The record gives the reactivity of an RNA of 207 nucleotides to DMS and 2A3. Source: RMDB library M2RFPK, as collected in RNAgym.

RNA sequence: GGGAACGACUCGAGUAGAGUCGAAAAGUGCCAGAGAAGUUGUAUAUUGGGCUACCAUCCAGUGAUGCAAUGGAGGCUUAUUAGGGUUGUCAGUUUUCCACAGGGUAGCAAUUAAAACUGUCCGAAAAAAACGAAACCACCUUCGGGUGGUUUCGAACAAACAUAAGAUCUUCGGAUCUUAUGUUUGAAAAGAAACAACAACAACAAC
Reactivity to DMS in 0.01 (KOAc 150mM, MgCl2 10mM, bicine 150mM(pH8.5), 24C), signal-to-noise 1, nucleotides 027 to 156: g010u010g030c010c030a140g010a210g000a130a260g020u000u010g000u000a080u010a130u010u000g010g020g050c080u010a120c060c040a140u000c030c000a060g010u030g040a120u010g020c020a060a080u000g010g010a170g050g020c020u000u000a050u010u010a180g040g000g000u000u000g000u000c000a060g000u000u010u000u000c040c020a120c070a180g000g040g040u000a010g000c030a030a110u010u000a040a060a070a020c010u000g000u010c000c120g000a000a010a100a130a060a160a120c020g000a030a020a030c010c010a020c020c010u010u000c300g070g080g040u010g040g000u000u000u000c010g000a060a130
Reactivity to 2A3 in 0.01 (KOAc 150mM, MgCl2 10mM, bicine 150mM(pH8.5), 24C), signal-to-noise 1, nucleotides 027 to 156: g000u030g000c000c010a010g000a030g010a300a020g030u020u020g030u030a030u010a020u080u080g040g000g030c000u040a000c000c000a020u120c000c010a010g030u060g100a020u020g000c010a010a030u010g050g020a030g030g000c090u040u070a130u110u200a190g130g000g000u000u000g000u010c000a000g000u030u100u250u130c050c020a100c090a050g010g080g000u050a000g040c040a040a060u260u110a100a000a000a000c000u000g010u010c010c000g060a120a220a000a000a000a000a000c000g000a010a020a020c000c010a000c000c020u000u000c110g080g010g000u000g000g010u000u000u000c000g020a000a010